[RMDB]
RNA sequence: GGGAACGACUCGAGUAGAGUCGAAAAUGGUUCUGUGUGUCUUUCUCUUAUUAGCAGGAGCGAGGGACUUGGAGACGCGUUGAGAGGUGUACACGAUGUUAAUGUUGGAGAACAUCGCGGACGGCUUUUUGAUUGCGGAUUACCACUGCUUAAAGUACUACGAGGACUUUUUCGAAAGUCCUCGUAGAAAAGAAACAACAACAACAAC
Reactivity to 2A3 in 0.01 (KOAc 150mM, MgCl2 10mM, bicine 150mM(pH8.5), 24C), signal-to-noise 1, nucleotides 027 to 156: u090g000g000u030u010c000u000g010u030g000u030g020u040c000u000u150u000c040u030c000u050u110a160u040u100a030g030c060a000g040g060a010g030c050g000a060g000g020g020a070c000u030u010g010g000a000g020a010c000g020c000g050u000u020g010a030g000a000g020g090u030g030u020a030c040a020c010g000a000u020g020u010u060a080a120u060g070u100u060g070g080a130g030a070a000c030a010u000c000g000c000g040g000a020c080g030g030c040u110u140u000u000u120g100a050u080u250g010c010g030g000a070u040u020a030c070c010a000c000u010g010c010u090u170a030a070a160g100u130a090
Structure probing data (2A3) for a 207-nucleotide construct.
Conditions: 150 mM KOAc, 10 mM MgCl2 and 150 mM bicine (pH 8.5), 24 C.
Source: RMDB library OK3TST, as collected in RNAgym.
The 2A3 profile rests on 459 reads.
2A3 adducts were read by reverse transcription with SuperScript II with manganese.